[RMDB]
RNA sequence: GGGAACGACUCGAGUAGAGUCGAAAACGAGAAACAUAAAACCUUGCUUAAACAUGACAUCUUUCUCUACAGACACUACAUCCAACAAAUACGAAUGCUUUAUCGUACAGAUACGAUCAAUACUGCAGUUGGUGAACUUCUAUACAGUACAAAUAACGUUAUGUUCUCUCUUCGGAGAGAACAUAACAAAAGAAACAACAACAACAAC
Reactivity to 2A3 in 0.01 (KOAc 150mM, MgCl2 10mM, bicine 150mM(pH8.5), 24C), signal-to-noise 8, nucleotides 027 to 156: c040g010a020g090a040a090a020c060a050u170a090a080a020a040c030c030u060u070g040c040u170u160a090a100a010c040a060u110g040a040c010a080u060c050u020u060u010c030u000c010u040a040c030a070g040a020c030a010c050u090a020c010a060u070c020c000a000a010c010a030a080a040u140a050c060g060a070a010u080g030c020u000u070u040a020u020c000g010u030a040c030a160g140a190u080a080c020g010a020u020c020a030a030u050a190c080u090g030c010a020g000u010u010g000g000u020g020a020a010c010u050u040c020u030a060u040a050c030a030g200u120a020c130a170a060a050u300a120a020c050
Reactivity to DMS in 0.01 (KOAc 150mM, MgCl2 10mM, bicine 150mM(pH8.5), 24C), signal-to-noise 2, nucleotides 027 to 156: c090g000a060g040a130a050a180c120a150u010a050a130a120a120c080c010u010u000g030c000u000u040a150a100a160c060a020u010g010a080c060a080u000c020u000u000u000c060u000c040u000a220c050a100g010a100c060a140c040u000a100c050a060u010c000c080a000a120c050a120a040a120u000a130c150g010a040a040u000g010c030u030u000u010a030u000c060g040u030a300c030a110g010a110u000a010c090g000a010u000c060a050a060u000a060c030u000g010c010a070g000u000u010g030g060u000g010a040a040c080u000u000c010u010a170u010a030c070a020g000u000a080c100a010a060a150u010a030a090c160